[RMDB]
RNA sequence: GGGAACGACUCGAGUAGAGUCGAAAAAGCCGGCGCUACGGCGCCGGCAAUGAGUUGGUGCUAUCAUACUUGUGUAUUACGUCACAAGGGAAAGUACCAGCUUUAGAGGAUGAUACGUCAUCCUCAAAAGCUUUGUUCAAUUCGUUGAACAAAGCUUAAAAGAAACAACAACAACAAC
Reactivity to 2A3 in 0.01 (KOAc 150mM, MgCl2 10mM, bicine 150mM(pH8.5), 24C), signal-to-noise 5, nucleotides 027 to 126: a000g030c010c000g000g000c010g000c020u090a140c300g160g000c000g000c010c000g000g000c010a010a050u060g000a000g000u000u010g010g010u010g000c010u020a030u070c030a050u060a300c010u020u000g000u010g040u040a100u280u250a170c250g120u130c050a000c000a000a000g000g020g000a040a030a020g010u010a000c000c000a000g000c000u050u010u060a040g000a000g000g000a000u020g000a010u000a050c180g040u020c010a000u010c000c000u000c000a020a020
Reactivity to DMS in 0.01 (KOAc 150mM, MgCl2 10mM, bicine 150mM(pH8.5), 24C), signal-to-noise 2, nucleotides 027 to 126: a080g020c000c000g070g040c100g140c040u010a060c150g050g070c030g190c000c090g020g000c000a000a020u000g000a010g020u000u010g010g030u010g020c000u000a060u000c030a090u000a090c020u010u010g000u000g010u010a120u000u070a130c190g000u000c010a000c010a010a010g000g000g000a000a050a010g030u000a010c000c000a020g000c000u000u000u010a040g000a000g000g000a000u000g010a040u010a090c160g000u000c010a000u030c000c000u000c010a030a050